[RMDB]
RNA sequence: GGGAACGACUCGAGUAGAGUCGAAAAUGAUCGACACCCCAAUAGGCACUAGAGAGUGUGCUAACUGUUGGGCUUGUUUUUGCCAUAGUCCCGUCAAAGACUUUGAAGAACCAUGUAAAGAAACAUUCAAAAUUGAUUAACGGCUGAGAGUAAAAUCCCUCUGCUCACAAUUCGUUGUGAGCAGAGGAAAAGAAACAACAACAACAAC
Reactivity to 2A3 in 0.01 (KOAc 150mM, MgCl2 10mM, bicine 150mM(pH8.5), 24C), signal-to-noise 2, nucleotides 027 to 156: u190g000a100u110c000g000a000c040a100c000c000c000c000a050a020u050a010g050g000c010a010c120u160a040g010a020g000a040g250u090g010u000g040c010u010a110a150c020u030g050u020u010g050g000g050c140u020u160g060u040u020u030u050u080g000c010c010a110u090a120g040u020c020c020c020g020u020c000a010a080a080g010a020c060u140u030u050g030a040a050g020a040a000c000c060a090u130g040u220a120a170a070g060a100a210a000c040a060u050u070c050a000a000a050a300u050u040g000a020u000u130a000a050c060g030g010c010u030g000a030g000a000g120u280a030a070a260a010u240c040